[RMDB]
RNA sequence: GGGAACGACUCGAGUAGAGUCGAAAAGAUAUGGAAGACCAGUAGACAUGCCUGCUAUCGGAAACGAUAGUAAAGGCAACAGCUACGGUCUUCCUAAGUCAAAGCUUGUCACUUCGGUGACAAGCAAGCUUAUCGGAUUGUUCGCAAUCCGAUAAGCAAAAGAAACAACAACAACAAC
Reactivity to DMS in 0.01 (KOAc 150mM, MgCl2 10mM, bicine 150mM(pH8.5), 24C), signal-to-noise 2, nucleotides 027 to 126: g000a020u000a090u030g000g000a010a000g020a020c000c010a120g030u000a000g000a040c080a170u010g000c020c010u000g010c010u010a010u000c010g010g020a010a030a100c010g000a000u010a000g030u000a040a080a060g020g030c000a050a040c200a200g000c000u010a010c000g000g010u000c000u000u010c000c010u000a010a060g010u000c010a120a160a140g010c000u000u000g000u010c000a000c000u000u030c290g000g000u000g010a020c000a000a010g020c000a020a030
Reactivity to 2A3 in 0.01 (KOAc 150mM, MgCl2 10mM, bicine 150mM(pH8.5), 24C), signal-to-noise 2, nucleotides 027 to 126: g000a000u040a020u080g000g000a010a000g030a010c010c140a070g000u010a000g020a040c120a300u230g000c010c000u000g020c000u010a000u000c010g040g000a020a020a010c020g020a000u030a000g000u080a240a180a140g030g020c010a030a030c060a030g010c000u000a000c000g000g000u010c000u000u000c000c010u000a010a000g030u000c030a040a040a040g000c000u010u000g000u000c000a010c040u060u110c300g180g000u000g010a000c010a000a000g010c000a000a000

The record gives the reactivity of an RNA of 177 nucleotides to DMS and 2A3. The RNA was probed in 150 mM KOAc, 10 mM MgCl2 and 150 mM bicine (pH 8.5) at 24 C. For 2A3, 4,529 sequencing reads were counted. Values cover nucleotides 27 to 126. 2A3 adducts were read by reverse transcription with SuperScript II with manganese.